[RMDB]
RNA sequence: GGGAACGACUCGAGUAGAGUCGAAAAGCAUUGUUCGCAAUGCCAGUAUGCGUACUACCUUGCGCAGGUCACAACGAUAAGUCUUCCCAAAUAGGAAGACUUUUGACGUUGGACCUGAACUACGCAAGGUAUCGCCAGGAAGCUGUUUCGACAGCAAUAGAGACCACAAUUUCGAUUGUGGUCUCUAAAAAGAAACAACAACAACAAC
Reactivity to DMS in 0.01 (KOAc 150mM, MgCl2 10mM, bicine 150mM(pH8.5), 24C), signal-to-noise 1, nucleotides 027 to 156: g010c000a020u000u000g010u000u030c250g050c020a020a000u000g000c030c020a190g060u040a040u000g050c030g010u000a060c200u010a000c000c000u010u010g000c000g000c000a000g000g020u000c010a100c030a000a010c020g020a190u000a010a030g020u000c000u010u000c000c000c070a000a130a300u000a040g020g010a020a010g010a010c000u000u000u000u000g030a090c040g070u000u020g020g000a040c000c010u010g000a030a170c030u040a090c000g000c010a030a010g010g000u000a010u000c040g040c000c090a120g040g000a150a300g010c000u000g000u000u000u000c030g000a080c040a030g020c070a140a160
Reactivity to 2A3 in 0.01 (KOAc 150mM, MgCl2 10mM, bicine 150mM(pH8.5), 24C), signal-to-noise 1, nucleotides 027 to 156: g000c000a000u070u070g150u100u210c270g040c030a030a000u000g000c000c050a040g020u070a070u180g000c000g060u050a080c050u000a010c000c000u000u000g000c000g030c010a080g010g000u060c070a130c000a300a000c050g010a050u000a050a000g000u000c000u000u060c010c010c000a160a160a000u260a040g000g050a050a000g010a050c000u060u000u000u000g210a030c010g000u050u000g000g030a000c000c040u000g000a070a000c100u050a000c020g000c000a000a030g000g000u000a000u030c050g000c000c000a050g040g030a040a030g000c050u000g000u040u130u140c210g020a030c030a010g000c040a060a000